[RMDB]
RNA sequence: GGGAACGACUCGAGUAGAGUCGAAAAAGACUAGAGUUCGCUCUAGUCUGAAAGGUCCUCUUAGUUAAAUGGAUAUAACGAGCCCCUUCUAAGGGCUAAUUGCAGGUUCGAUUCCUGCAGGGGACACCAGGGUGAUCAUGCCUUUCGAGGCAUGAAACCCAUAUGCUCUUUUCGAAGAGCAUAUGGGAAAAGAAACAACAACAACAAC
Reactivity to 2A3 in 0.01 (KOAc 150mM, MgCl2 10mM, bicine 150mM(pH8.5), 24C), signal-to-noise 3, nucleotides 027 to 156: a000g010a000c000u000a000g000a010g040u120u100c200g050c090u000c000u000a000g000u000c000u000g000a050a030a020g110g000u000c000c000u010c000u000u010a010g000u010u000a020a000a020u130g060g080a140u050a000u000a070a000c000g000a000g010c000c020c010c030u120u160c140u270a050a060g010g000g000c000u000a000a000u000u000g000c000a000g000g000u000u010c000g000a000u000u010c000c000u000g000c000a000g000g000g010g000a000c000a000c000c010a040g110g070g020u160g050a060u030c010a010u000g000c000c000u050u080u120c250g120a020g000g020c000a000u000g000a020a000a010
Reactivity to DMS in 0.01 (KOAc 150mM, MgCl2 10mM, bicine 150mM(pH8.5), 24C), signal-to-noise 6, nucleotides 027 to 156: a010g010a020c000u000a020g010a050g020u000u010c300g020c000u000c000u000a020g010u000c000u000g000a020a070a100g040g010u000c000c000u000c020u000u000a010g010u000u010a000a020a030u010g020g020a300u000a030u050a010a040c010g000a040g010c000c000c000c040u010u010c240u020a130a040g010g010g020c000u000a000a000u000u010g020c010a010g010g010u000u000c030g000a300u000u000c000c000u010g020c000a000g000g010g050g000a020c020a090c040c000a060g000g000g010u000g010a030u000c010a010u000g030c000c010u000u010u000c220g010a050g000g000c000a010u000g010a000a040a090